Structure probing data (DMS and 2A3) for a 177-nucleotide construct. For 2A3 the reverse transcriptase was SuperScript II with manganese. For 2A3, 1,132 sequencing reads were counted. The reactions ran in a buffer of 150 mM KOAc, 10 mM MgCl2 and 150 mM bicine (pH 8.5), at 24 C.
RNA sequence: GGGAACGACUCGAGUAGAGUCGAAAAAGGAAAGCAAAGAAAGCAACGGGGCUAGCCGGUGGGUGUUCCGCCCCCCGAGAGGGGAAGAGUGAGGCUUAUCCCGGGGAACUCGACUUAUCGUCCCCACCUCUAUAACUCACUUCGGUGAGUUAUAGAGAAAAGAAACAACAACAACAAC
Reactivity to DMS in 0.01 (KOAc 150mM, MgCl2 10mM, bicine 150mM(pH8.5), 24C), signal-to-noise 1, nucleotides 027 to 126: a040g020g000a100a090a070g010c000a090a080a090g000a080a170a170g000c050a080a060c070g010g010g010g010c110u010a060g020c020c020g010g000u000g000g000g000u010g030u030u010c010c020g010c020c020c000c010c010c020g010a130g000a170g040g010g000g000a050a030g010a060g020u010g010a160g000g000c010u010u010a120u010c020c000c000g000g040g000g000a090a020c060u000c010g030a050c120u000u000a100u020c020g000u000c010c000c010c020a110c150
Reactivity to 2A3 in 0.01 (KOAc 150mM, MgCl2 10mM, bicine 150mM(pH8.5), 24C), signal-to-noise 2, nucleotides 027 to 126: a020g150g010a140a060a030g040c060a140a100a140g020a070a110a000g080c000a070a000c000g000g010g010g030c000u010a000g000c030c010g070g000u030g000g030g020u140g160u300u100c000c010g030c020c010c020c000c000c000g080a080g040a020g160g010g000g000a050a040g090a020g200u210g120a050g000g010c000u020u050a050u030c060c010c030g000g020g030g000a020a010c010u010c010g000a020c020u130u120a040u160c010g020u030c030c000c000c000a020c000